[RMDB]
RNA sequence: GGGAACGACUCGAGUAGAGUCGAAAAAGCACUUAAGCAAAUUGAGCGUACUGCUCAGCUUUCCAUUCAGAACGGUGAACUACCAGAUGUAAAGGUGUAUACCAACUCUGGCGCUAGCUUUGGUUUACCAUGACCCAGCAUUCGUGCUGGGUCAUGGAAAAGAAACAACAACAACAAC
Reactivity to DMS in 0.01 (KOAc 150mM, MgCl2 10mM, bicine 150mM(pH8.5), 24C), signal-to-noise 2, nucleotides 027 to 126: a000g020c040a190c190u000u040a100a140g020c040a040a120a070u000u010g000a040g070c010g060u000a160c140u010g020c000u000c030a020g030c030u000u000u000c050c020a160u020u000c140a150g000a060a100c130g000g000u000g000a080a060c090u000a080c020c010a010g000a000u000g020u000a090a130a110g030g000u000g010u000a160u000a020c000c020a100a060c060u000c000u000g030g010c220g030c100u010a040g010c060u020u020u000g010g000u010u000u000a110
Reactivity to 2A3 in 0.01 (KOAc 150mM, MgCl2 10mM, bicine 150mM(pH8.5), 24C), signal-to-noise 1, nucleotides 027 to 126: a000g090c060a070c060u100u040a000a080g040c020a010a010a300u100u080g000a000g000c020g080u260a230c170u240g010c010u000c020a020g010c000u040u040u000c010c040a080u180u120c000a050g040a200a110c030g040g020u070g000a050a000c010u060a060c030c000a000g020a070u170g080u110a040a060a120g030g040u020g010u040a080u100a150c010c010a010a040c030u060c000u030g060g000c020g070c050u060a060g000c030u080u040u130g040g000u020u080u100a030
An RNA of 177 nucleotides, treated with DMS and 2A3 and read out base by base. For DMS the reverse transcriptase was MarathonRT. For 2A3, 762 sequencing reads were counted. It was measured as part of the RMDB library OK2TRN.